[RMDB]
RNA sequence: GGGAACGACUCGAGUAGAGUCGAAAACCCAGUCUUAUCGCUUCGAGUGUCAGCUCCAGCAACUGUUCGGGCGGAUCAAGGGAGAUUCCGGCGUGGGCGCCAAGCUACAUGGCGAUCGUCGAGAUCCUACUGAAAGGCACUUCGGUGCCUUUCAGUAAAAAGAAACAACAACAACAAC
Reactivity to 2A3 in 0.01 (KOAc 150mM, MgCl2 10mM, bicine 150mM(pH8.5), 24C), signal-to-noise 3, nucleotides 027 to 126: c010c000c000a000g060u030c020u100u220a100u080c050g010c010u070u120c060g040a020g040u030g110u060c040a030g020c020u000c000c020a020g040c000a100a140c080u080g030u040u040c050g010g020g010c010g060g020a040u020c040a040a030g020g070g000a070g050a090u160u060c020c000g000g040c000g000u050g050g150g020c000g000c000c010a020a020g050c020u060a100c070a130u040g000g000c010g010a040u070c000g020u010c000g000a010g010a110u010c000c000
Reactivity to DMS in 0.01 (KOAc 150mM, MgCl2 10mM, bicine 150mM(pH8.5), 24C), signal-to-noise 2, nucleotides 027 to 126: c000c000c000a080g000u010c060u050u000a050u040c040g020c020u050u000c070g020a100g020u030g010u030c030a070g080c030u010c080c100a180g010c120a150a190c090u010g000u000u000c030g040g000g000c010g000g000a010u000c030a160a040g000g020g010a050g010a040u020u060c020c000g000g000c030g050u030g010g000g030c010g000c020c010a000a080g010c150u060a120c090a160u050g020g000c000g000a010u040c010g000u000c040g010a060g000a010u000c000c070